[RMDB]
Source: RMDB library OK2TRN, as collected in RNAgym.
This 177-nucleotide RNA was probed chemically with DMS and 2A3.
DMS adducts were read by reverse transcription with MarathonRT.
Reactivities are rounded to 0.1 and cut off at 0 and 3.
RNA sequence: GGGAACGACUCGAGUAGAGUCGAAAACUAGUGACCAUGAUAGGAUCGAUCGAUCAUCGUCUAGUAGUACACUAGCUAGCUAGGAUGAUCGUCAUGCAUGGAUCUGGAUCCUAGAGCAUACCAUGCAUCUGCACGAUAAAUUCGUUUAUCGUGCAGAAAAAGAAACAACAACAACAAC
Reactivity to DMS in 0.01 (KOAc 150mM, MgCl2 10mM, bicine 150mM(pH8.5), 24C), signal-to-noise 7, nucleotides 027 to 126: c070u000a060g020u000g000a180c050c020a110u000g010a140u010a060g010g000a040u000c030g010a080u010c030g010a010u000c000a010u000c020g010u010c010u000a020g020u000a040g000u000a120c240a110c200u010a090g020c020u000a040g010c030u010a020g010g010a020u000g010a010u000c010g010u010c070a090u000g000c030a020u000g000g000a120u000c080u000g010g000a060u000c010c010u000a030g000a110g010c150a070u000a120c020c020a030u000g000c010a140
Reactivity to 2A3 in 0.01 (KOAc 150mM, MgCl2 10mM, bicine 150mM(pH8.5), 24C), signal-to-noise 6, nucleotides 027 to 126: c040u040a030g090u030g180a090c020c030a100u140g040a060u080a060g040g040a020u030c040g020a040u070c030g000a010u000c020a000u010c010g200u050c090u010a010g010u000a010g030u100a050c150a080c230u100a090g040c020u030a020g060c010u030a030g080g020a020u000g010a010u000c000g030u010c000a000u050g010c000a010u020g020g040a090u020c060u090g100g010a030u020c000c010u030a030g010a020g080c030a030u050a150c030c000a010u020g010c000a040